[RMDB]
Structure probing data (2A3 and DMS) for a 177-nucleotide construct. The reactions ran in a buffer of 150 mM KOAc, 10 mM MgCl2 and 150 mM bicine (pH 8.5), at 24 C.
RNA sequence: GGGAACGACUCGAGUAGAGUCGAAAAAGCCAUUCUUUCCCUUUUUGCUUCCAAACUCCUCAACUGGGAACCUUCAUAUGUGCAGUAUUUAUAUUGGAUCAUACUGGUGAUUAUAAAAGUUCCUAGGUCUAUCAGGAUAAUUCGUUAUCCUGAUAGAAAAAGAAACAACAACAACAAC
Reactivity to 2A3 in 0.01 (KOAc 150mM, MgCl2 10mM, bicine 150mM(pH8.5), 24C), signal-to-noise 9, nucleotides 027 to 126: a000g040c020c010a060u070u030c030u020u040u040c000c000c000u020u020u010u040u060g020c010u060u000c020c010a070a090a090c040u050c020c010u100c030a070a080c020u010g010g000g010a010a010c010c010u050u090c040a040u040a030u150g130u140g070c000a000g010u020a030u020u140u030a240u040a120u150u210g110g030a070u120c020a010u030a020c010u020g090g030u130g120a070u060u140a050u030a080a070a010a000g000u000u000c000c000u010a010g020g040
Reactivity to DMS in 0.01 (KOAc 150mM, MgCl2 10mM, bicine 150mM(pH8.5), 24C), signal-to-noise 9, nucleotides 027 to 126: a090g020c050c030a070u010u010c050u010u010u000c010c010c010u000u000u010u000u000g010c050u000u010c020c040a060a100a130c090u010c030c030u000c100a110a150c020u000g000g000g010a020a020c010c020u010u000c100a030u000a020u000g010u020g020c010a020g000u000a010u010u010u010a090u020a180u040u020g010g010a130u010c190a020u000a010c020u000g010g010u010g000a100u010u010a030u010a030a030a060a070g000u000u000c000c000u000a020g010g010

For DMS the reverse transcriptase was MarathonRT.